Structure probing data (DMS and 2A3) for a 177-nucleotide construct. For DMS the reverse transcriptase was MarathonRT. For 2A3 the reverse transcriptase was SuperScript II with manganese. The reactions ran in a buffer of 150 mM KOAc, 10 mM MgCl2 and 150 mM bicine (pH 8.5), at 24 C. It was measured as part of the RMDB libraries RFM100 and RFMREP.
RNA sequence: GGGAACGACUCGAGUAGAGUCGAAAAACUUUUCCGUUAAGCGAGGAACGAGUAGGAAAAGGAAACGUUCCCCAAUCGGAACGAAUGGGUAGAGAACGUUUAAUUGACUCGUGUUGAGUGCAGCAGUAGAGACUAGAUUAUUCGUAAUCUAGUCUCUAAAAGAAACAACAACAACAAC
Reactivity to DMS in 0.01 (KOAc 150mM, MgCl2 10mM, bicine 150mM(pH8.5), 24C), signal-to-noise 9, nucleotides 027 to 126: a070c040u010u000u000u000c000c000g020u020u010a080a110g010c060g000a130g020g010a120a070c040g000a070g010u010a200g000g000a020a020a020a020g000g010a030a020a020c010g000u000u000c000c010c000c010a020a040u000c020g010g020a140a140c120g010a030a050u000g010g000g010u040a140g010a170g000a010a010c010g010u000u000u000a080a090u010u020g010a050c000u010c000g020u000g020u000u000g000a080g020u010g010c090a070g010c150a100g010u000
Reactivity to 2A3 in 0.01 (KOAc 150mM, MgCl2 10mM, bicine 150mM(pH8.5), 24C), signal-to-noise 9, nucleotides 027 to 126: a000c020u030u010u010u000c020c000g040u150u220a100a040g050c060g030a080g090g060a130a080c070g010a050g060u080a040g060g030a000a030a020a010g020g020a010a030a000c010g000u000u000c010c000c000c000a000a050u030c020g170g140a090a130c090g020a050a050u040g010g030g000u100a070g070a010g010a250a000c000g000u010u010u070a100a090u060u110g040a020c000u010c020g030u060g080u130u090g040a060g040u090g010c050a040g030c010a000g030u060